[RMDB]
RNA sequence: GGGAACGACUCGAGUAGAGUCGAAAAGUCACACCAAAAUUCGUUUUGGUGUGACCCAUCGAUAUGGACCGAUGUGACAUGAUCCUCGGAAACGAGAAGAUCAACAGCACACCGGUCCUAAGUCCAGAGGUGCAGGGUUGUUCGCAACCCUGCACAAUAUCAUACGCCUAUUCGUAGGCGUAUGAUAAAAAGAAACAACAACAACAAC
Reactivity to DMS in 0.01 (KOAc 150mM, MgCl2 10mM, bicine 150mM(pH8.5), 24C), signal-to-noise 1, nucleotides 027 to 156: g000u000c000a030c000a020c000c000a010a030a000a130u000u010c300g000u000u000u000u000g040g000u000g050u000g000a000c000c070c080a060u000c190g000a160u040a200u000g000g010a010c020c000g020a010u070g000u000g000a090c080a300u000g000a020u000c000c000u000c020g000g000a120a150a220c040g000a050g000a020a060g000a000u000c000a040a100c030a220g000c000a040c020a000c000c000g000g020u020c000c000u000a010a040g030u010c030c040a300g040a140g020g010u010g000c000a040g000g040g010u000u000g020u000u000c240g000c040a040a050c000c000c000u010g030c000a000c040a010a080
The data come from the RNA Mapping Database (RMDB), library RNAMAK. The record gives the reactivity of an RNA of 207 nucleotides to DMS.